Notes:
The data come from the RNA Mapping Database (RMDB), library OK2TST. An RNA of 177 nucleotides, treated with DMS and read out base by base. The RNA was probed in 150 mM KOAc, 10 mM MgCl2 and 150 mM bicine (pH 8.5) at 24 C. For DMS the reverse transcriptase was MarathonRT.
[RMDB]
RNA sequence: GGGAACGACUCGAGUAGAGUCGAAAAGGUUGAGAAUAUCGGCAUUAUCCUGAUGGGGGUCGGUGUCGGUAUGAUUGGUAUUGCCAGCCAUCAGCCGGUACUCGCCGCGCUGGGUUUACUGGGUGCGGGCGAGAGUACGCUUCGGCGUACUCUCGCCAAAAGAAACAACAACAACAAC
Reactivity to DMS in 0.01 (KOAc 150mM, MgCl2 10mM, bicine 150mM(pH8.5), 24C), signal-to-noise 1, nucleotides 027 to 126: g020g000u020u000g000a090g000a210a060u010a000u000c020g010g040c000a050u000u000a100u000c010c020u000g040a100u000g000g010g000g010g030u000c120g010g000u000g010u000c000g000g040u000a010u000g000a110u010u000g000g030u010a090u000u010g050c140c030a150g010c020c040a050u000c010a060g020c000c000g000g010u010a070c050u000c210g010c030c010g020c060g080c000u000g000g000g030u000u010u000a190c020u030g000g030g030u000g050c070g050